[RMDB]
RNA sequence: GGGAACGACUCGAGUAGAGUCGAAAACAUCGAUGCUCUUGCAUACAUUGAUCCGCUUUCACAGGAAGAAAAGACAAAGGUCGAUGCACUGAUCAUGGAAGAGCUGAAGAAUAGCGUAAAAAGACCAGUGAACAAAAGAUUUCGAUCUUUUGUUCACAAAAGAAACAACAACAACAAC
Reactivity to 2A3 in 0.01 (KOAc 150mM, MgCl2 10mM, bicine 150mM(pH8.5), 24C), signal-to-noise 4, nucleotides 027 to 126: c030a080u050c030g040a020u050g020c000u000c000u030u080g100c020a020u030a080c010a020u020u010g010a010u020c020c050g000c070u010u040u060c150a200c090a120g120g130a090a130g040a050a130a030a030g100a080c130a060a090a010g040g000u020c010g000a010u010g000c030a040c230u130g040a110u120c070a010u050g050g040a020a000g000a010g020c010u010g010a040a010g030a040a070u100a080g090c070g040u090a110a100a050a030a020g050a020c020c050a040
Reactivity to DMS in 0.01 (KOAc 150mM, MgCl2 10mM, bicine 150mM(pH8.5), 24C), signal-to-noise 4, nucleotides 027 to 126: c060a120u010c050g010a200u000g000c010u000c020u000u010g010c010a060u010a120c060a040u010u010g000a020u000c010c080g020c040u000u010u000c040a150c210a200g010g010a170a100g010a060a010a050a070g020a140c090a060a090a120g000g010u010c040g020a050u000g000c050a080c180u010g000a080u000c150a040u000g000g010a030a020g000a030g010c010u000g010a140a130g000a030a070u000a080g020c080g020u000a060a070a040a140a070g000a140c030c030a100
This 177-nucleotide RNA was probed chemically with 2A3 and DMS. Source: RMDB library OK2TRN, as collected in RNAgym. The reactions ran in a buffer of 150 mM KOAc, 10 mM MgCl2 and 150 mM bicine (pH 8.5), at 24 C.